[RMDB]
The record gives the reactivity of an RNA of 177 nucleotides to 2A3. The RNA was probed in 150 mM KOAc, 10 mM MgCl2 and 150 mM bicine (pH 8.5) at 24 C. It was measured as part of the RMDB library OK1LIB.
RNA sequence: GGGAACGACUCGAGUAGAGUCGAAAAUGACGCGCUCAAGCUUCCUGGAAGGUUCUGCUCGUCUGUGUUUAAGCCGGUACCGGUCACGCGGUCUGAACCUUAUUCAGAUCAUAGCUGCAUGGAGACGGUGACCUCACGUGUUCGCACGUGAGGUCACAAAAGAAACAACAACAACAAC
Reactivity to 2A3 in 0.01 (KOAc 150mM, MgCl2 10mM, bicine 150mM(pH8.5), 24C), signal-to-noise 2, nucleotides 027 to 126: u130g020a000c010g030c020g000c010u050c020a000a090g000c000u000u030c000c020u020g000g060a060a000g000g000u020u000c000u020g000c010u000c020g210u040c120u190g050u000g120u000u200u100a100a010g000c080c020g000g080u140a200c150c000g000g090u080c030a040c100g010c020g000g000u000c000u000g000a000a000c000c000u050u040a280u050u100c000a000g070a070u020c090a060u050a050g010c050u090g090c080a000u070g090g000a080g010a050c070g050